[RMDB]
RNA sequence: GGGAACGACUCGAGUAGAGUCGAAAAGGCUUUCCUACCUCGGGCAUAGAUUACCUUAGCUGUAUUUGGCAAAACUUUUAGGAAUUUUGGUCCUCAAUGCUCUUCAACUUCGUACUUUAUUUGGCUUUUUUAAACAUUUUUGGAUUCGAGCGUCACUACUAUACCUACGGUUCGCCGUAGGUAUAGUAAAAGAAACAACAACAACAAC
Reactivity to DMS in 0.01 (KOAc 150mM, MgCl2 10mM, bicine 150mM(pH8.5), 24C), signal-to-noise 1, nucleotides 027 to 156: g000g020c040u000u010u010c030c010u000a060c090c000u000c050g000g030g020c050a090u020a120g010a230u010u010a080c050c030u000u000a150g020c040u010g000u010a130u000u000u000g000g020c050a030a110a130a130c080u000u020u000u010a140g050g020a040a090u010u000u020u020g010g000u000c000c010u000c050a060a100u000g010c020u000c010u010u010c040a050a130c070u000u000c040g040u010a070c050u010u000u000a060u020u010u010g020g040c020u010u000u010u010u010u000a090a120a120c030a130u000u000u000u000u000g050g000a220u000u000c040g020a120g010c040g010u000c050a080c140u000
Reactivity to 2A3 in 0.01 (KOAc 150mM, MgCl2 10mM, bicine 150mM(pH8.5), 24C), signal-to-noise 5, nucleotides 027 to 156: g060g010c010u070u070u040c010c010u020a080c010c030u040c050g020g000g000c070a070u060a050g080a100u080u160a150c020c010u070u070a030g000c040u050g070u180a180u070u220u140g040g000c000a040a050a070a220c060u110u100u180u150a060g020g040a050a060u090u050u070u200g040g010u040c010c010u030c030a040a030u030g000c010u010c000u120u050c040a080a070c050u070u070c050g090u060a090c020u060u130u150a160u100u110u060g030g030c000u080u040u010u010u040u190a100a150a040c040a100u130u160u090u110u140g090g000a040u050u030c020g010a020g000c010g020u020c010a010c050u010
Structure probing data (DMS and 2A3) for a 207-nucleotide construct. For 2A3, 2,328 sequencing reads were counted. The data come from the RNA Mapping Database (RMDB), library VIROID.